[RMDB]
RNA sequence: GGGAACGACUCGAGUAGAGUCGAAAAGCACGGUAAAGCCAAACUCUCGCUGCUGGAUAAAGUGGAAAAUGGUCGCCUGAAAGUGCAGCAGGGGAUUAUCGCGGGCUGUUCUGGCGGUAACUACGAACCUGUACUUGAGGUUCGCCUCAAGUACAGGAAAAGAAACAACAACAACAAC
Reactivity to DMS in 0.01 (KOAc 150mM, MgCl2 10mM, bicine 150mM(pH8.5), 24C), signal-to-noise 2, nucleotides 027 to 126: g010c090a040c070g000g000u000a050a120a200g010c020c020a020a080a080c030u000c000u000c090g030c040u000g010c010u010g000g010a120u020a080a050a070g010u000g020g010a040a090a110a120u010g010g010u000c050g000c020c000u000g010a020a110a110g000u000g040c060a080g000c030a010g010g000g000g000a080u000u000a030u000c070g000c040g000g010g020c130u010g010u000u000c100u000g020g000c040g040g010u010a040a040c070u010a090c210g000a080a100
Reactivity to 2A3 in 0.01 (KOAc 150mM, MgCl2 10mM, bicine 150mM(pH8.5), 24C), signal-to-noise 2, nucleotides 027 to 126: g040c010a000c070g020g050u080a030a100a000g020c000c020a080a020a050c040u010c020u000c040g030c080u040g020c000u030g000g010a160u150a130a210a030g080u100g040g080a020a060a040a050u090g020g040u060c040g060c120c000u020g040a100a100a030g120u130g120c030a010g000c000a000g060g000g020g000a020u010u040a070u060c010g000c030g010g070g000c070u040g000u080u010c080u070g030g000c050g060g020u060a050a020c070u100a050c090g090a060a050
Source information
Structure probing data (DMS and 2A3) for a 177-nucleotide construct. It was measured as part of the RMDB library OK2TST. For DMS the reverse transcriptase was MarathonRT. The 2A3 profile rests on 1,586 reads. Values cover nucleotides 27 to 126. For DMS, 1,784 sequencing reads were counted. The RNA was probed in 150 mM KOAc, 10 mM MgCl2 and 150 mM bicine (pH 8.5) at 24 C.